[RMDB]
RNA sequence: GGGAACGACUCGAGUAGAGUCGAAAACUUGUACGCUUCGGCGUACAAGAAAUCCCAGGUAUGCAUCCAACAACAACAACAACAGAUGGUUACCAUGUUGUAAAACCAAAGACUUCGGUCUUUGGAAGAUACAGAUUUACUUCGGUAAAUCUGUAUCAAAAGAAACAACAACAACAAC
Reactivity to 2A3 in 0.01 (KOAc 150mM, MgCl2 10mM, bicine 150mM(pH8.5), 24C), signal-to-noise 3, nucleotides 027 to 126: c000u010u000g000u000a000c000g010c010u030u030c190g160g000c000g000u000a000c000a000a010g000a000a040a000u000c000c000c000a000g100g040u200a120u240g120c020a040u010c040c010a020a020c010a040a020c020a000a010c000a000a030c050a000a010c020a030g120a110u080g040g130u070u040a040c020c020a050u090g010u030u020g030u060a050a060a020a080c000c000a000a010a000g010a000c020u060u120c300g060g010u010c000u000u000u010g000g000a010a010
Reactivity to DMS in 0.01 (KOAc 150mM, MgCl2 10mM, bicine 150mM(pH8.5), 24C), signal-to-noise 3, nucleotides 027 to 126: c000u000u000g000u000a000c000g020c010u000u010c190g020g010c000g020u000a000c000a000a000g000a050a100a140u000c000c000c000a150g000g010u010a060u010g000c060a050u000c020c030a080a050c080a050a040c070a080a060c080a030a060c030a030a050c060a080g000a090u010g000g020u000u010a110c060c080a080u010g010u020u010g020u010a110a100a080a170c010c000a000a010a020g000a020c000u010u010c180g010g010u000c000u000u000u000g010g000a040a040
Record summary:
This 177-nucleotide RNA was probed chemically with 2A3 and DMS. Reactivities are given for positions 27 through 126. DMS adducts were read by reverse transcription with MarathonRT.